[RMDB]
RNA sequence: GGGAACGACUCGAGUAGAGUCGAAAAGUGCAAUGUCUGUGGCAUAAAAGAUGUUGUUCUACAAGGCUUAAAAGCUUGUUGUUACGUGGGUGUGCAAACUGUUGAAGAUCUGCGUGCUCGCAUGACAUGAGAUGGGCGUUCGCGCCCAUCAAAAGAAACAACAACAACAAC
Reactivity to DMS in 0.01 (KOAc 150mM, MgCl2 10mM, bicine 150mM(pH8.5), 24C), signal-to-noise 4, nucleotides 027 to 129: g020u010g010c040a070a010u070g000u000c130u030g010u020g020g000c020a040u070a040a050a110a080g010a220u040g030u000u000g020u000u000c070u060a130c110a110a020g020g020c040u010u180a030a150a090a170g020c000u030u030g080u000u000g030u050u000a000c130g050u000g010g010g100u030g000u000g060c020a010a060a110c070u010g050u060u030g030a150a010g000a130u020c080u020g000c060g080u000g060c070u010c030g060c040a000u010g000a070c030a050u000g000a260
Reactivity to 2A3 in 0.01 (KOAc 150mM, MgCl2 10mM, bicine 150mM(pH8.5), 24C), signal-to-noise 2, nucleotides 027 to 129: g090u050g000c000a030a130u040g000u050c050u000g040u040g070g030c030a080u230a040a130a020a060g070a100u040g000u010u000g000u000u000c000u000a010c000a050a000g100g000c030u030u300a140a190a000a010g040c010u010u010g000u000u020g000u000u000a000c030g010u000g000g000g000u010g000u000g000c030a040a110a030c030u050g040u140u150g050a050a000g080a120u000c000u010g000c010g000u000g000c000u000c000g000c010a000u200g000a020c010a030u050g000a060
The data come from the RNA Mapping Database (RMDB), library 15KLIB.
Chemical mapping of a 170-nucleotide RNA with DMS and 2A3.
The DMS profile rests on 4,490 reads.
High DMS reactivity at an A or C suggests that its Watson-Crick edge is free.